RNA sequence: GGGAACGACUCGAGUAGAGUCGAAAAAAGGAAGCGGACAUCAAAGAUCCCAAGCAGCUGCAGGAGGCACUCAUCUCUCUCGGGGGGUUCGCAGCUCAGGAGGCGAAGAGGCACACCGCCAGAAUCGAAACAUCUCCCAAUUCGUUGGGAGAUGUUUAAAAGAAACAACAACAACAAC
Reactivity to DMS in 0.01 (KOAc 150mM, MgCl2 10mM, bicine 150mM(pH8.5), 24C), signal-to-noise 1, nucleotides 027 to 126: a060a070g020g020a090a090g010c090g030g020a040c050a080u000c130a030a090a070g010a110u020c000c000c010a070a100g030c110a030g000c020u010g060c120a130g010g030a080g030g000c090a040c100u010c100a060u010c020u000c080u000c040u010c070g020g010g010g020g030g010u010u000c080g000c020a080g050c020u000c130a050g020g000a090g010g020c100g010a070a090g010a090g030g010c020a020c060a050c060c040g000c010c010a080g000a070a080u000c170g000